Chemical mapping of a 207-nucleotide RNA with 2A3 and DMS. The reactions ran in a buffer of 150 mM KOAc, 10 mM MgCl2 and 150 mM bicine (pH 8.5), at 24 C. For 2A3, 2,660 sequencing reads were counted. DMS adducts were read by reverse transcription with MarathonRT.
RNA sequence: GGGAACGACUCGAGUAGAGUCGAAAAGUCCAAAAUUGACUCGGCGGCCCUGUCAUGAGGCCGAAACGAAGGCACGUACCCCUUCGAAUGGCGUCGGGGAGUCAGCGGCUAUAUAUGCGCCUAAUGCUAAAGUCGUGCUGGUUCGCCAGCACGACAACUUAACUCUCUACUUCGGUAGAGAGUUAAGAAAAGAAACAACAACAACAAC
Reactivity to 2A3 in 0.01 (KOAc 150mM, MgCl2 10mM, bicine 150mM(pH8.5), 24C), signal-to-noise 4, nucleotides 027 to 156: g060u030c020c010a040a040a030a060u120u090g030a050c000u010c080g070g000c010g010g070c050c010c000u060g120u130c140a200u120g040a040g040g000c000c010g000a020a000a000c010g010a020a000g030g010c100a040c180g150u170a090c030c020c000c000u010u010c010g040a070a090u130g030g000c010g080u030c020g050g010g000g030a030g030u020c050a000g020c020g070g000c040u020a010u040a010u020a010u300g070c040g030c000c010u110a120a070u110g030c050u100a190a040a040g000u010c000g010u000g000c000u010g010g020u010u020c170g020c070c000a000g000c000a010c000g000a000c000a000a000
Reactivity to DMS in 0.01 (KOAc 150mM, MgCl2 10mM, bicine 150mM(pH8.5), 24C), signal-to-noise 1, nucleotides 027 to 156: g050u000c000c050a090a050a120a170u000u020g010a050c010u010c030g000g040c030g000g000c000c010c010u000g000u010c210a130u000g010a060g000g000c010c000g000a030a090a100c040g010a060a020g000g000c060a070c080g030u000a160c050c040c000c020u010u000c060g000a080a180u000g040g010c030g010u000c040g030g000g010g000a090g020u010c010a070g020c060g020g050c060u000a060u000a070u000a060u000g000c030g020c030c020u000a090a090u000g010c000u010a100a030a170g030u010c000g000u000g010c000u010g020g020u000u010c300g020c000c010a030g000c030a000c000g000a010c000a000a040